[RMDB]
RNA sequence: GGGAACGACUCGAGUAGAGUCGAAAAAGUGAGUAUGGCUCGUUACGACCAGCCAUACUCACAACGGUUUUCCUAAAUCGUCGUGAGACGGACCUUGGAAAACCUAGUAUUUAAAUAACUAGGUCAAAUUAGCCUAGAUCCUUCGGGAUCUAGGCAACACGAAGCAUUGCUUCGGCAAUGCUUCGUGAAAAGAAACAACAACAACAAC
Reactivity to 2A3 in 0.01 (KOAc 150mM, MgCl2 10mM, bicine 150mM(pH8.5), 24C), signal-to-noise 1, nucleotides 027 to 156: a020g000u000g000a000g000u000a000u000g000g000c010u030c050g000u030u050a040c180g070a010c030c050a000g000c000c000a000u000a000c000u010c000a000c000a000a000c000g000g000u000u000u010u000c000c000u010a020a020a020u050c020g000u000c000g020u050g220a060g000a050c000g000g000a000c000c020u010u020g000g010a000a040a000a000c000c000u000a020g040u000a020u030u160u080a070a190a140u110a030a080c070u010a000g000g000u000c000a000a050a110u200u160a030g010c000c000u000a000g000a010u010c030c000u030u090c180g070g000g000a020u010c000u000a000g000g020c000a000a000